The record gives the reactivity of an RNA of 177 nucleotides to DMS and 2A3. Conditions: 150 mM KOAc, 10 mM MgCl2 and 150 mM bicine (pH 8.5), 24 C. Source: RMDB library RFMREP, as collected in RNAgym.
RNA sequence: GGGAACGACUCGAGUAGAGUCGAAAAGAAAUGCCCAGAUGGAGGACAGAGGGCCAAACCACCCCAGUGAAUUCAUAACAGGAGAUAACUUGCUUAAGACCUGACUGUUUUUAAAAGCGAAUGCCAGCAUUUGAAGAGAGUUCGCUCUCUUCAAAUGAAAAGAAACAACAACAACAAC
Reactivity to DMS in 0.01 (KOAc 150mM, MgCl2 10mM, bicine 150mM(pH8.5), 24C), signal-to-noise 3, nucleotides 027 to 126: g010a080a140a100u010g000c000c020c000a100g010a150u010g010g010a070g000g010a160c060a050g000a200g010g020g030c040c040a030a100a080c060c050a160c040c040c030c020a100g000u000g020a100a070u000u010c070a020u010a090a030c060a030g010g000a080g010a100u000a070a080c070u000u000g010c080u000u010a060a080g010a050c060c020u000g000a070c090u000g000u000u000u000u010u010a030a090a100a060g000c070g020a060a030u000g000c030c040a070g000
Reactivity to 2A3 in 0.01 (KOAc 150mM, MgCl2 10mM, bicine 150mM(pH8.5), 24C), signal-to-noise 2, nucleotides 027 to 126: g010a000a080a000u090g020c000c030c000a050g060a070u060g040g010a030g030g010a010c040a010g060a130g000g000g050c040c000a060a080a040c020c000a020c000c020c000c000a020g010u030g180a060a070u090u050c050a000u100a170a040c000a020g040g030a050g040a070u070a080a060c020u050u050g030c000u080u070a070a010g030a030c020c000u000g100a130c040u050g190u040u020u010u040u130a070a110a000a000g090c050g060a100a010u100g020c000c000a020g000